An RNA of 177 nucleotides, treated with DMS and 2A3 and read out base by base. The RNA was probed in 150 mM KOAc, 10 mM MgCl2 and 150 mM bicine (pH 8.5) at 24 C.
RNA sequence: GGGAACGACUCGAGUAGAGUCGAAAAUGCACUAAGUGGACCAACAUUAACAGUUGAUGAGACUACAGGUGAAACUCACCGUCGUCAUCACAUGACUGCUGACGGUAUGUACCGUGGUCGUCAAAUCUCACUCUUACGACUUCGGUCGUAAGAGUGAAAAAGAAACAACAACAACAAC
Reactivity to DMS in 0.01 (KOAc 150mM, MgCl2 10mM, bicine 150mM(pH8.5), 24C), signal-to-noise 3, nucleotides 027 to 126: u010g050c100a020c070u030a090a070g020u010g020g040a110c100c000a080a030c110a050u000u000a020a150c120a070g010u020u010g020a110u010g020a130g010a020c020u000a040c040a180g000g020u000g000a060a240a140c270u000c040a010c020c000g030u040c060g000u010c020a030u000c100a070c190a180u000g000a040c110u020g020c090u000g000a030c040g000g010u000a070u010g030u010a010c020c030g010u000g000g020u000c060g060u000c080a040a070a080u000c130
Reactivity to 2A3 in 0.01 (KOAc 150mM, MgCl2 10mM, bicine 150mM(pH8.5), 24C), signal-to-noise 3, nucleotides 027 to 126: u060g040c010a020c080u090a120a090g020u040g040g070a040c010c000a070a050c060a130u150u170a150a050c000a030g050u020u030g030a070u040g040a000g000a030c020u040a020c070a100g030g000u070g050a210a090a060c060u020c020a030c030c000g040u030c000g040u010c000a040u010c010a030c010a080u110g030a020c050u010g000c050u050g080a030c020g000g030u060a070u300g080u080a030c010c010g020u010g000g010u020c040g000u030c020a010a060a080u070c050

The DMS profile rests on 1,414 reads. The data come from the RNA Mapping Database (RMDB), library OK2TST.